[RMDB]
RNA sequence: GGGAACGACUCGAGUAGAGUCGAAAAUAGUAGCCGAAGCGACAGCGCAAAGGGGGCGAGGGGUGGUCCUGCGGGCGCGAGGAAGGACACCCGAAGAAAGGAAGGGUGAAAACCCUGUUUCGGCGGGGUAUACAGUAUGCUUCGGCAUACUGUAUACAAAAGAAACAACAACAACAAC
Reactivity to DMS in 0.01 (KOAc 150mM, MgCl2 10mM, bicine 150mM(pH8.5), 24C), signal-to-noise 2, nucleotides 027 to 126: u020a110g000u010a090g020c020c000g010a060a040g000c050g010a110c090a090g000c050g050c070a070a040a160g020g000g000g010g000c090g000a080g010g000g000g010u000g010g010u000c040c010u010g000c050g010g000g000c040g020c060g020a060g000g010a080a020g020g000a150c040a110c000c000c010g000a030a030g000a030a030a030g020g020a080a070g010g010g000u000g000a060a030a070a040c010c010c000u000g000u000u010u000c020g000g030c070g010g020g010
This 177-nucleotide RNA was probed chemically with DMS. Conditions: 150 mM KOAc, 10 mM MgCl2 and 150 mM bicine (pH 8.5), 24 C. For DMS, 1,418 sequencing reads were counted.